RNA sequence: GGGAACGACUCGAGUAGAGUCGAAAAGAUAUGGACCGCAGGUUGCAACAGCUGUGAUCGGAAACGAUCACAGACAUGCAAACCUGACGGUCCUAAGUCAAACGAUAAUGCGUUCGCGCAUUAUCGAGUUCGUAUUAUAGUUCGCUAUAAUACGAACAAAAGAAACAACAACAACAAC
Reactivity to DMS in 0.01 (KOAc 150mM, MgCl2 10mM, bicine 150mM(pH8.5), 24C), signal-to-noise 9, nucleotides 027 to 126: g010a050u000a300u000g000g010a010c000c000g020c010a010g010g010u000u000g010c050a060a110c300a190g010c000u000g010u000g010a010u000c010g010g000a110a080a200c000g010a010u000c010a000c000a000g000a020c090a170u000g010c060a030a040a080c000c000u000g000a100c000g020g000u000c000c000u000a010a070g000u000c030a110a130a290c020g000a020u000a000a010u000g010c000g020u000u010c290g020c020g010c010a000u000u000a000u000c000g010a080
Reactivity to 2A3 in 0.01 (KOAc 150mM, MgCl2 10mM, bicine 150mM(pH8.5), 24C), signal-to-noise 9, nucleotides 027 to 126: g020a020u060a030u110g000g010a000c000c010g000c010a000g030g030u040u060g050c140a260a110c050a300g060c020u000g000u000g000a000u000c010g020g000a050a050a030c020g000a000u010c010a000c010a000g010a020c000a010u130g030c020a040a060a110c000c000u010g100a030c000g000g000u000c000c000u000a010a000g020u000c030a050a030a080c020g000a000u000a010a000u010g020c010g030u060u100c300g000c000g000c160a000u000u000a000u000c000g000a070

Record summary:
This 177-nucleotide RNA was probed chemically with DMS and 2A3. DMS adducts were read by reverse transcription with MarathonRT. The RNA was probed in 150 mM KOAc, 10 mM MgCl2 and 150 mM bicine (pH 8.5) at 24 C. The 2A3 profile rests on 66,309 reads. Source: RMDB library TTRDES, as collected in RNAgym.